[RMDB]
RNA sequence: GGGAACGACUCGAGUAGAGUCGAAAAAGGCCGGUUCGAAGGCCCUUCAUUCAAUUGCUAUGAGUGGGCGUGGUUCAAAGACUGGCCGAGAAAAAGAAAACGAAAUCCUUCGGGAUUUCGUUUUCAACUUCUAACAGAACUUCGGUUCUGUUAGAAGAAAAGAAACAACAACAACAAC
Reactivity to DMS in 0.01 (KOAc 150mM, MgCl2 10mM, bicine 150mM(pH8.5), 24C), signal-to-noise 1, nucleotides 027 to 126: a100g010g020c010c010g010g000u000u000c020g000a210a230g000g000c000c000c010u010u000c010a010u000u000c010a060a120u000u040g020c190u020a120u000g000a020g000u000g020g010g000c060g000u020g020g020u000u010c010a070a110a150g010a000c010u000g000g000c030c000g010a090g000a020a050a110a130a170g010a020a000a020a020c000g000a000a010a010u000c000c010u000u000c240g010g000g000a010u000u000u000c010g010u000u010u000u000c000a150a080
Reactivity to 2A3 in 0.01 (KOAc 150mM, MgCl2 10mM, bicine 150mM(pH8.5), 24C), signal-to-noise 1, nucleotides 027 to 126: a000g040g000c020c000g000g000u110u070c020g000a020a050g060g010c000c000c000u000u040c000a020u010u020c010a010a220u180u300g080c010u170a050u140g000a000g050u040g000g030g020c090g080u230g010g060u130u300c040a130a050a050g000a010c010u010g010g000c030c000g000a060g000a030a090a010a000a000g000a000a000a010a010c000g040a010a040a000u050c010c010u040u050c170g010g030g000a010u000u000u000c000g000u010u000u000u010c000a010a000